[RMDB]
RNA sequence: GGGAACGACUCGAGUAGAGUCGAAAAUGGCGACUGGGUGAAGUUCAUCAUCCCCGUGGUCUUAGUGUCCUUCUUCCUCGCCAACUCAGGACAAGCCAUCUACUAUACCGCUCAUGGCAUGAGGCAGCAAUUAUCCCUUUUUCGAAAGGGAUAAUUGAAAAGAAACAACAACAACAAC
Reactivity to DMS in 0.01 (KOAc 150mM, MgCl2 10mM, bicine 150mM(pH8.5), 24C), signal-to-noise 9, nucleotides 027 to 126: u000g000g010c020g000a070c100u010g010g010g030u000g010a060a090g010u010u010c110a070u000c090a090u000c020c010c030c080g010u000g010g010u000c030u000u000a090g020u000g010u000c030c020u000u000c050u010u000c040c010u000c040g010c030c030a070a110c060u000c070a050g000g010a080c100a090a130g010c020c010a040u000c050u000a080c090u000a080u000a110c090c050g010c050u000c070a070u000g000g010c020a160u000g010a080g000g010c110a090g010
Reactivity to 2A3 in 0.01 (KOAc 150mM, MgCl2 10mM, bicine 150mM(pH8.5), 24C), signal-to-noise 9, nucleotides 027 to 126: u070g010g000c040g030a040c060u050g020g020g000u060g060a070a040g060u160u090c030a080u040c010a070u070c070c000c000c030g060u070g040g010u030c010u040u090a090g020u040g030u070c010c000u010u040c010u050u040c000c010u020c010g010c020c010a050a070c040u030c050a020g020g040a060c040a050a000g000c010c000a040u030c020u060a090c020u040a070u070a170c030c040g020c030u060c070a050u070g040g000c030a050u070g010a020g040g000c000a010g030
Source: RMDB library OK2TST, as collected in RNAgym. This 177-nucleotide RNA was probed chemically with DMS and 2A3. For DMS the reverse transcriptase was MarathonRT. Conditions: 150 mM KOAc, 10 mM MgCl2 and 150 mM bicine (pH 8.5), 24 C. 2A3 adducts were read by reverse transcription with SuperScript II with manganese.